[RMDB]
RNA sequence: GGGAACGACUCGAGUAGAGUCGAAAAGAUAUGGAGUCAGGCACUUUUGACGCGACCACAUCGGAAACGAUGUCCCUCGCGAUAAGUGCCGACUCCUAAGUCAAAGAGUUUUCUUCGGAAAACUCAAGCAUUCUGUAUUCUUCGGAAUACAGAAUGCAAAAGAAACAACAACAACAAC
Reactivity to DMS in 0.01 (KOAc 150mM, MgCl2 10mM, bicine 150mM(pH8.5), 24C), signal-to-noise 2, nucleotides 027 to 126: g000a020u000a250u020g000g000a020g020u010c000a170g030g010c000a000c000u000u000u010u020g020a180c090g010c000g000a020c180c220a010c000a010u000c000g010g000a040a080a090c010g010a020u000g010u000c120c080c180u000c000g010c000g070a110u020a010a020g000u000g000c010c000g000a010c000u000c000c000u010a010a070g010u000c030a090a120a230g000a030g000u000u000u000u000c000u000u020c220g010g000a010a020a010a010c000u000c000a030a110
Reactivity to 2A3 in 0.01 (KOAc 150mM, MgCl2 10mM, bicine 150mM(pH8.5), 24C), signal-to-noise 2, nucleotides 027 to 126: g020a000u030a010u090g030g010a040g010u250c300a300g090g000c020a000c060u090u160u170u300g300a210c190g000c010g010a000c010c080a010c010a010u000c000g000g020a000a060a000c010g000a000u000g010u000c030c030c010u020c020g020c000g100a200u060a270a000g000u000g030c000c000g000a000c000u000c000c000u000a020a000g000u010c030a040a180a090g010a000g010u000u000u010u020c000u040u130c290g090g010a000a000a000a000c020u000c000a000a010
Description:
The record gives the reactivity of an RNA of 177 nucleotides to DMS and 2A3. For DMS, 1,914 sequencing reads were counted. The 2A3 profile rests on 4,643 reads. 2A3 adducts were read by reverse transcription with SuperScript II with manganese. Conditions: 150 mM KOAc, 10 mM MgCl2 and 150 mM bicine (pH 8.5), 24 C.